[RMDB]
RNA sequence: GGGAACGACUCGAGUAGAGUCGAAAAAGUCCAUCCUCGCCGCGGGUCUGAAAGUUAAAAGCUAAAGGUGAAAAAAUGAUCAUCCAACUAAACGACAUCAUGAAGGCAGACAUUAUUCAGCUUGAAGACUAUGACAUGCAACUGGCGUUUGAAAUUGGAUAUUGAAGAGGUUCGCCUCUUCAAUAUCAAAAGAAACAACAACAACAAC
Reactivity to 2A3 in 0.01 (KOAc 150mM, MgCl2 10mM, bicine 150mM(pH8.5), 24C), signal-to-noise 4, nucleotides 027 to 156: a010g060u020c020c010a040u040c000c030u020c010g010c020c010g030c040g040g000g000u000c000u060g080a150a130a010g000u060u070a040a040a030a030g000c020u080a060a030a080g130g020u080g060a090a020a010a030a000a040u080g030a060u030c020a060u090c060c030a040a080c080u140a120a100a050c100g080a030c040a080u180c020a020u100g040a070a020g050g000c030a010g000a030c010a020u050u100a060u130u100c030a020g010c030u010u070g040a170a020g030a040c020u020a050u100g010a010c020a010u100g000c020a070a060c120u070g040g010c020g000u030u080u130g110a090a070a040u140u120g070
Reactivity to DMS in 0.01 (KOAc 150mM, MgCl2 10mM, bicine 150mM(pH8.5), 24C), signal-to-noise 3, nucleotides 027 to 156: a090g000u000c030c010a140u010c020c060u010c090g030c060c040g000c060g020g010g020u000c020u000g000a140a080a100g000u010u000a040a120a050a110g000c030u000a040a050a080g020g000u010g000a010a040a100a080a090a050u010g000a100u000c030a120u030c020c020a060a190c060u010a050a060a090c030g000a050c030a040u010c030a070u000g010a090a090g040g010c050a090g010a140c040a030u000u000a120u000u000c040a080g030c020u000u000g010a130a110g000a040c030u000a150u000g020a080c040a080u000g030c030a080a110c070u000g020g010c020g020u000u000u000g000a050a060a220u010u000g030